[RMDB]
RNA sequence: GGGAACGACUCGAGUAGAGUCGAAAAGAUAUGGAUCGGUCACGGGAGCUGAGUGUCGGAAACGACAUAACAGCUUUGAUCGUGACACGAUCCUAAGUCAAAAGCCCUAUCGUUCGCGAUAGGGCAAGUGUAUGGUUUGCUUCGGCAAACCAUACACAAAAGAAACAACAACAACAAC
Reactivity to DMS in 0.01 (KOAc 150mM, MgCl2 10mM, bicine 150mM(pH8.5), 24C), signal-to-noise 1, nucleotides 027 to 126: g000a030u000a300u000g000g000a000u010c000g040g020u000c020a010c010g000g010g010a030g000c000u010g000a300g010u000g000u000c000g010g000a090a110a240c000g000a010c000a000u000a200a140c020a010g010c030u000u000u010g000a060u010c010g010u000g000a010c000a080c030g000a020u000c000c000u000a000a160g000u020c040a200a130a260a160g010c000c000c000u000a010u000c000g010u000u060c300g000c000g010a000u000a010g030g010g050c000a000a000
Reactivity to 2A3 in 0.01 (KOAc 150mM, MgCl2 10mM, bicine 150mM(pH8.5), 24C), signal-to-noise 1, nucleotides 027 to 126: g020a010u070a010u170g020g000a010u010c010g030g000u000c050a010c000g090g010g040a120g000c000u020g040a080g030u000g030u040c000g030g020a050a040a060c000g000a000c030a010u200a250a110c000a020g020c000u080u030u070g140a130u060c000g000u000g000a000c000a000c030g000a000u030c000c000u030a060a000g000u000c010a000a120a220a050g030c000c000c000u000a000u010c000g040u140u080c300g000c040g110a020u010a000g030g000g000c000a000a000
The record gives the reactivity of an RNA of 177 nucleotides to DMS and 2A3. The reactions ran in a buffer of 150 mM KOAc, 10 mM MgCl2 and 150 mM bicine (pH 8.5), at 24 C. Source: RMDB library TTRDES, as collected in RNAgym.